[RMDB]
Source: RMDB libraries RFM100 and RFMREP, as collected in RNAgym. Structure probing data (DMS and 2A3) for a 177-nucleotide construct. The reactions ran in a buffer of 150 mM KOAc, 10 mM MgCl2 and 150 mM bicine (pH 8.5), at 24 C. For DMS the reverse transcriptase was MarathonRT.
RNA sequence: GGGAACGACUCGAGUAGAGUCGAAAAACGGUCAUAUACGUAUGACCGAAUGAGCAUAACAGGGCCACCCCAAAGCGUUCACAUUGUGGCCCCUGUCAGAUUCUGGUAAAUCUGCGAGUUCUGCUAAGACAGGAAGGGAAUUCGUUCCCUUCCUGUCAAAAGAAACAACAACAACAAC
Reactivity to DMS in 0.01 (KOAc 150mM, MgCl2 10mM, bicine 150mM(pH8.5), 24C), signal-to-noise 3, nucleotides 027 to 126: a120c000g000g010u000c000a000u010a030u000a100c190g030u010a010u030g010a030c000c000g000a050a030u020g000a060g000c040a020u010a050a030c030a130g010g000g030c010c010a030c010c040c030c070a110a060a170g000c060g020u010u010c050a050c110a110u030u030g020u000g000g020c030c000c000c040u010g000u040c010a020g000a030u010u010c090u030g020g020u030a080a030a000u010c000u010g010c110g020a150g030u000u000c020u000g000c010u010a070a130
Reactivity to 2A3 in 0.01 (KOAc 150mM, MgCl2 10mM, bicine 150mM(pH8.5), 24C), signal-to-noise 3, nucleotides 027 to 126: a000c010g000g000u000c030a010u040a000u000a020c300g120u000a000u000g010a000c000c000g010a000a050u100g000a000g010c040a030u030a080a090c020a050g000g010g000c000c000a030c030c010c020c020a060a180a030g110c090g080u160u110c060a090c060a180u100u210g010u000g000g000c000c000c010c000u020g050u040c000a010g020a040u070u050c030u230g160g060u130a090a050a000u000c000u000g000c030g020a050g040u030u060c040u000g000c020u010a130a000